[RMDB]
RNA sequence: GGGAACGACUCGAGUAGAGUCGAAAAAUUUUAGGGUCUACUACUGGAGGACUAGUCUUAAGACAGUGGGACAAAAGUUCUUGCGAUUUUCACCCCUUAAUCAAUAUGCACAUGUUGACUACCAAUGUGUAAGGCAGUCAAGAGAAGCAGAGAAGAAUGACUAAUUAUGAUUCGUCAUAAUUAGUCAAAAAGAAACAACAACAACAAC
Reactivity to DMS in 0.01 (KOAc 150mM, MgCl2 10mM, bicine 150mM(pH8.5), 24C), signal-to-noise 3, nucleotides 027 to 156: a130u000u010u000u000a060g030g010g020u010c030u000a080c030u000a090c040u000g010g010a100g020g010a060c040u010a200g040u000c020u000u000a100a140g020a090c080a110g010u000g010g010g000a090c040a030a050a070a140g020u000u000c050u000u000g030c040g010a220u000u000u000u000c030a100c030c010c010c010u010u000a070a100u000c050a040a090u000a110u000g000c030a090c080a160u000g030u010u000g000a030c010u010a020c020c030a040a130u000g020u010g020u000a090a210g010g030c010a030g010u000c010a020a060g010a090g010a110a160g020c020a040g010a110g020a060a110g010a130a210
Reactivity to 2A3 in 0.01 (KOAc 150mM, MgCl2 10mM, bicine 150mM(pH8.5), 24C), signal-to-noise 4, nucleotides 027 to 156: a000u140u160u090u110a020g030g000g010u030c040u070a090c020u020a020c060u150g050g030a020g020g000a000c020u030a030g010u000c020u090u150a120a050g030a080c050a040g080u140g010g000g010a000c020a030a190a000a010g010u010u010c010u040u070g140c030g080a100u020u020u050u110c050a090c000c000c000c010u010u100a050a060u090c060a030a040u050a040u180g040c020a030c010a060u050g040u110u040g030a030c000u030a010c020c000a060a080u080g020u000g040u120a040a080g050g000c010a010g020u040c000a010a000g030a000g000a100a020g000c030a010g030a000g030a130a020g030a040a040
Description:
This 207-nucleotide RNA was probed chemically with DMS and 2A3. For 2A3, 3,290 sequencing reads were counted. The reactions ran in a buffer of 150 mM KOAc, 10 mM MgCl2 and 150 mM bicine (pH 8.5), at 24 C.